This 207-nucleotide RNA was probed chemically with 2A3 and DMS. DMS (dimethyl sulfate) methylates the pairing face of unpaired adenines and cytosines. It was measured as part of the RMDB library OK3TST. DMS adducts were read by reverse transcription with MarathonRT. The DMS profile rests on 3,201 reads.
[RMDB]
RNA sequence: GGGAACGACUCGAGUAGAGUCGAAAAGACCAUGCGCCAUUGCGAGUACUUUGAGUGCGAUGGGACCAAGCUCCCCCUGGCCGUGCUCGACCUGGACACGUUUGGCAAGCUGAGUCCCUAUGACCUGCAACUGCUGGAGGAGCGAGUGGUACUGGUGCGCGAUCAUUAAUUUCGAUUAAUGAUCGCGAAAAGAAACAACAACAACAAC
Reactivity to 2A3 in 0.01 (KOAc 150mM, MgCl2 10mM, bicine 150mM(pH8.5), 24C), signal-to-noise 3, nucleotides 027 to 156: g040a020c000c000a010u090g000c000g020c000c000a020u030u080g030c050g110a030g010u080a130c040u040u130u180g140a100g090u070g030c040g050a030u010g000g040g020a030c040c040a140a070g030c010u080c000c020c000c020c020u000g090g000c000c000g000u010g030c000u020c040g170a210c020c050u060g030g020a020c010a020c070g040u040u020u130g020g000c020a040a020g020c030u010g020a020g070u020c020c000c010u050a120u170g070a110c000c030u020g020c040a110a050c010u090g030c000u030g040g010a060g000g000a030g010c020g010a010g040u050g050g000u030a080c020u000g000g010u070g010
Reactivity to DMS in 0.01 (KOAc 150mM, MgCl2 10mM, bicine 150mM(pH8.5), 24C), signal-to-noise 2, nucleotides 027 to 156: g020a100c030c010a120u000g030c050g050c060c040a150u000u010g030c010g060a180g030u000a070c040u000u000u030g020a110g020u040g010c020g020a140u000g000g000g050a040c050c020a060a170g020c020u010c020c010c030c000c030u010g000g000c130c070g160u000g000c010u000c000g010a120c100c010u010g010g000a050c060a160c010g010u000u000u000g020g020c050a050a070g040c040u010g010a200g010u000c000c010c100u010a100u010g010a080c020c020u040g000c030a060a090c030u000g060c070u020g000g000a100g000g030a040g010c020g010a110g000u010g000g040u000a070c060u000g020g050u020g020

The 2A3 profile rests on 1,554 reads. For 2A3 the reverse transcriptase was SuperScript II with manganese.